RNA sequence: GGGAACGACUCGAGUAGAGUCGAAAAGACACCCCCAGUUUUGUACUCAAAAAGCAUGAACAGUUCUGCUGAUGUGACAUCUGAUUUCUACGUGCGCAGUGAGCCAAAACAGCUGCUGUUUGCUAUGGGUUGCCAGAUAAUUCGUUAUCUGGCAACCAAAAGAAACAACAACAACAAC
Reactivity to 2A3 in 0.01 (KOAc 150mM, MgCl2 10mM, bicine 150mM(pH8.5), 24C), signal-to-noise 3, nucleotides 027 to 126: g070a010c040a080c020c000c030c000c000a000g000u000u030u040u150g040u040a160c010u000c050a000a040a000a050a000g000c030a070u110g030a080a130c050a050g030u140u090c060u040g060c050u030g000a100u060g070u030g040a080c030a040u140c040u010g030a170u060u040u030c030u100a080c030g060u080g040c040g000c010a010g020u050g120a000g030c040c030a010a070a070a120c010a020g000c000u030g000c030u000g000u000u030u090g010c020u050a080u080g060
Reactivity to DMS in 0.01 (KOAc 150mM, MgCl2 10mM, bicine 150mM(pH8.5), 24C), signal-to-noise 2, nucleotides 027 to 126: g000a190c250a070c010c000c000c030c000a040g010u000u030u050u020g010u000a080c010u000c000a020a010a120a080a060g010c020a000u000g010a030a070c210a050g050u010u000c090u000g000c040u000g030a150u000g010u000g020a130c100a020u000c020u010g000a030u050u020u000c040u010a150c180g000u000g020c100g010c060a050g020u000g000a070g000c300c030a010a040a030a160c090a100g050c030u000g030c000u000g000u000u020u000g020c050u000a060u000g000
This 177-nucleotide RNA was probed chemically with 2A3 and DMS. The 2A3 profile rests on 1,016 reads. For 2A3 the reverse transcriptase was SuperScript II with manganese. Source: RMDB library RFM100, as collected in RNAgym.